[RMDB]
Chemical mapping of a 177-nucleotide RNA with DMS and 2A3. For DMS, 3,267 sequencing reads were counted. DMS adducts were read by reverse transcription with MarathonRT. Conditions: 150 mM KOAc, 10 mM MgCl2 and 150 mM bicine (pH 8.5), 24 C. Source: RMDB library OK2TRN, as collected in RNAgym.
RNA sequence: GGGAACGACUCGAGUAGAGUCGAAAAAGGCCCCAACACUGGAUGGUUCUGUAGGGAGCCUAGGGAGCCUGGUCAUCAACUUGCAAUACCUCACAGAGCCAGUUCACAUCCCACUCUGAGCUCCCACAGAGUCACUAGUAUUCGUACUAGUGACUCUAAAAGAAACAACAACAACAAC
Reactivity to DMS in 0.01 (KOAc 150mM, MgCl2 10mM, bicine 150mM(pH8.5), 24C), signal-to-noise 4, nucleotides 027 to 126: a110g010g000c060c020c020c050a060a080c110a080c130u000g010g010a100u000g010g020u010u000c010u000g020u000a110g010g000g010a060g010c010c030u010a030g000g010g010a060g000c090c050u010g000g010u010c100a110u010c120a050a080c090u000u010g010c090a110a110u010a150c050c010u010c130a060c060a080g000a080g010c010c020a020g010u000u000c090a050c160a140u000c010c000c010a190c100u010c060u000g010a140g010c040u000c000c000c010a120c190
Reactivity to 2A3 in 0.01 (KOAc 150mM, MgCl2 10mM, bicine 150mM(pH8.5), 24C), signal-to-noise 2, nucleotides 027 to 126: a000g080g030c030c000c010c010a000a120c050a020c140u130g110g070a120u050g020g060u050u060c020u040g060u060a120g000g000g020a020g010c000c020u010a030g000g010g000a030g020c020c030u030g030g030u050c040a150u040c030a050a100c030u070u070g020c010a070a160u070a240c000c020u090c050a030c020a040g010a000g030c000c010a010g020u120u100c040a030c020a160u020c000c000c000a040c020u140c060u010g040a030g000c010u020c000c000c000a030c020